An RNA of 207 nucleotides, treated with 2A3 and DMS and read out base by base. The RNA was probed in 150 mM KOAc, 10 mM MgCl2 and 150 mM bicine (pH 8.5) at 24 C. For DMS the reverse transcriptase was MarathonRT. 2A3 adducts were read by reverse transcription with SuperScript II with manganese. The data come from the RNA Mapping Database (RMDB), library OK3TST. For DMS, 4,174 sequencing reads were counted.
RNA sequence: GGGAACGACUCGAGUAGAGUCGAAAAAUGAUGUGGAUAAUGGUUGUCAGGUCUUUCUUGGAGGACAUGGACAUAAUGGUUAGAAUUUUCACGCUUAUUUACCAAAUAGGUUUAUGCUGGGCCCAGGAAAAAUGGACGUAAGUUCCUAACUCCAUUCUACUAGACAUGAGUUCGCUCAUGUCUAGUAAAAAGAAACAACAACAACAAC
Reactivity to 2A3 in 0.01 (KOAc 150mM, MgCl2 10mM, bicine 150mM(pH8.5), 24C), signal-to-noise 2, nucleotides 027 to 156: a020u130g100a020u050g020u040g020g010a040u060a100a100u130g090g010u060u000g060u060c040a030g090g000u000c000u010u080u000c020u060u070g020g030a040g020g000a040c020a050u090g010g000a000c000a030u180a040a070u120g050g030u040u090a030g060a080a080u090u050u050u110c070a050c030g020c030u030u070a040u130u120u010a090c020c010a030a090a290u090a060g040g000u020u090u070a030u070g010c030u010g000g030g000c000c000c010a010g020g050a030a020a040a000a000u050g000g010a000c080g040u040a000a070g010u020u000c000c010u000a000a010c010u020c000c000a000u110u030c000
Reactivity to DMS in 0.01 (KOAc 150mM, MgCl2 10mM, bicine 150mM(pH8.5), 24C), signal-to-noise 3, nucleotides 027 to 156: a160u010g010a100u030g020u000g030g020a090u010a060a080u010g010g020u010u000g040u010c050a120g010g000u010c040u010u000u000c060u010u010g050g030a070g030g010a070c070a070u010g020g020a090c050a100u000a060a110u010g010g020u000u000a080g030a110a100u000u000u000u000c090a120c110g000c040u000u010a080u030u010u000a180c080c050a040a120a140u010a060g000g020u000u000u000a040u010g010c060u000g000g010g010c030c000c020a160g030g000a010a040a010a050a040u000g000g000a060c030g020u010a030a050g020u010u000c020c010u010a040a300c060u000c010c000a160u010u000c080